Conditions: 150 mM KOAc, 10 mM MgCl2 and 150 mM bicine (pH 8.5), 24 C. This 177-nucleotide RNA was probed chemically with 2A3 and DMS. For DMS the reverse transcriptase was MarathonRT. For 2A3 the reverse transcriptase was SuperScript II with manganese.
RNA sequence: GGGAACGACUCGAGUAGAGUCGAAAAACAGCCAAAUACGGAGUCUUUGACUGCAAACCUCUGCCUGUGCUGUGGGCAAAGAUGCCAGAGUACACGCCUGAGAACACCAUUAUGUUCGACGACCUCCAGUUGGAUGUAUCUUCGGAUACAUCCAACUAAAAGAAACAACAACAACAAC
Reactivity to 2A3 in 0.01 (KOAc 150mM, MgCl2 10mM, bicine 150mM(pH8.5), 24C), signal-to-noise 2, nucleotides 027 to 126: a000c010a000g070c010c010a040a060a000u170a060c040g120g010a040g020u030c030u050u070u030g050a030c000u040g010c030a060a000a160c000c050u040c030u060g000c030c000u060g020u060g050c020u050g000u240g020g000g060c060a070a100a140g180a070u110g000c000c010a020g010a000g120u000a000c020a000c070g040c000c050u090g020a030g020a060a020c050a030c050c010a060u100u170a120u300g040u080u020c000g010a040c030g040a030c050c010u000c020c020
Reactivity to DMS in 0.01 (KOAc 150mM, MgCl2 10mM, bicine 150mM(pH8.5), 24C), signal-to-noise 3, nucleotides 027 to 126: a100c050a040g020c010c020a040a030a050u000a110c120g030g000a100g000u010c080u000u000u020g000a040c030u000g020c060a090a110a100c070c010u000c030u000g000c030c070u000g010u010g020c050u000g020u020g010g000g010c040a060a080a060g000a140u000g010c000c010a100g010a100g020u000a030c030a040c120g000c020c140u000g020a120g010a040a050c040a100c090c060a120u010u000a140u000g020u010u020c020g020a180c100g000a140c070c030u000c030c060